RNA sequence: GGGAACGACUCGAGUAGAGUCGAAAACAUCUUAAGUAGACGCCCAAUAUUCAUAUGAGGUUGGAUCUGAUUGGAUUUUGAAAAUCAUCUAUCAUCUCCGAGCAAUCUGGUGUGUCUAGAAGCACGGAUAUCAGCGUCUAUUCGUAGACGCUGAUAUAAAAGAAACAACAACAACAAC
Reactivity to 2A3 in 0.01 (KOAc 150mM, MgCl2 10mM, bicine 150mM(pH8.5), 24C), signal-to-noise 1, nucleotides 027 to 126: c030a150u060c020u200u080a290a170g030u000a080g060a000c000g030c000c000c000a010a010u160a100u100u090c050a010u110a140u300g000a030g050g070u050u080g060g000a020u030c030u030g040a000u000u100g060g010a010u080u050u070u210g050a110a110a000a000u030c020a010u050c060u010a030u040c000a030u010c030u000c010c010g020a050g190c080a090a000u080c110u030g050g000u080g010u010g000u110c000u040a070g050a100a020g000c100a030c080g070g000
Reactivity to DMS in 0.01 (KOAc 150mM, MgCl2 10mM, bicine 150mM(pH8.5), 24C), signal-to-noise 2, nucleotides 027 to 126: c100a110u010c030u000u000a090a120g010u010a030g010a040c060g010c010c010c010a080a080u000a120u010u010c070a150u020a080u010g000a050g000g000u020u000g000g010a030u000c180u010g010a020u000u000g020g010a040u000u000u010u020g020a120a060a060a010u000c030a040u000c030u000a020u010c020a020u000c060u010c020c080g000a050g020c130a020a060u010c130u000g000g000u010g030u000g000u010c030u010a050g010a070a110g000c140a030c120g010g010

The record gives the reactivity of an RNA of 177 nucleotides to 2A3 and DMS. It was measured as part of the RMDB library OK2TRN. 2A3 adducts were read by reverse transcription with SuperScript II with manganese.